[RMDB]
RNA sequence: GGGAACGACUCGAGUAGAGUCGAAAACAACAAAACAAAACAUAGGGGAGUCAGGGUUCGGAACACCUACCGGAACCUAGGGUAACACUGACUGUGGAGGGGAAAAGAAAGAAAACAAAACAAAACAGCUAUACCCUACUUUCGAGUAGGGUAUAGCAAAAGAAACAACAACAACAAC
Reactivity to DMS in 0.01 (KOAc 150mM, MgCl2 10mM, bicine 150mM(pH8.5), 24C), signal-to-noise 2, nucleotides 027 to 126: c150a190a230c270a030a110a060a160c270a150a110a130a180c220a190u060a170g000g000g070g000a020g030u000c120a000g000g000g030u000u020c070g000g000a030a080c190a070c010c090u000a010c030c000g000g000a060a000c000c030u000a090g000g000g000u000a000a090c250a000c040u010g000a010c170u000g010u000g010g000a190g000g000g000g000a030a090a000a070g020a060a030a030g170a120a040a040a170c240a070a090a030a050c160a070a120a070a020c300a050
Reactivity to 2A3 in 0.01 (KOAc 150mM, MgCl2 10mM, bicine 150mM(pH8.5), 24C), signal-to-noise 2, nucleotides 027 to 126: c030a000a000c010a010a140a030a010c010a040a030a000a040c140a060u210a030g000g000g000g000a060g050u120c010a010g000g000g000u000u010c030g000g070a050a020c070a130c040c000u110a030c010c000g060g000a030a030c000c000u000a000g000g030g030u030a110a010c050a000c180u040g050a000c040u020g060u100g040g030a130g000g000g000g000a160a020a000a000g160a050a080a000g110a120a100a010a000c090a030a160a000a000c070a000a050a010a000c060a010
This 177-nucleotide RNA was probed chemically with DMS and 2A3. The data come from the RNA Mapping Database (RMDB), library OK1LIB. For 2A3 the reverse transcriptase was SuperScript II with manganese. For 2A3, 1,322 sequencing reads were counted.